Chemical mapping of a 177-nucleotide RNA with DMS.
The DMS profile rests on 1,528 reads.
The reactions ran in a buffer of 150 mM KOAc, 10 mM MgCl2 and 150 mM bicine (pH 8.5), at 24 C.
Values cover nucleotides 27 to 126.
[RMDB]
RNA sequence: GGGAACGACUCGAGUAGAGUCGAAAACAGCAAUGGUUCACAAGAUGGUAUUCUAGUAGUGACGCUGGGAAUAUUUGGGGCAACACUUAUGGAUCAAGUUGAAGAGGUGAUACCCGUCGCUCACCCAGUGCGUAUAACGUUUCGACGUUAUACGCACAAAAGAAACAACAACAACAAC
Reactivity to DMS in 0.01 (KOAc 150mM, MgCl2 10mM, bicine 150mM(pH8.5), 24C), signal-to-noise 2, nucleotides 027 to 126: c070a100g040c100a090a120u000g010g000u000u000c050a060c030a030a040g000a060u010g010g020u000a030u000u000c000u000a050g010u000a160g040u000g030a070c150g000c010u000g000g020g030a030a030u000a040u010u000u000g040g000g000g000c030a040a090c050a060c060u000u000a030u000g000g000a040u000c050a070a130g010u000u000g000a060a140g000a150g000g040u010g010a160u000a100c070c030c030g020u000c070g010c080u000c070a050c010c000c050a160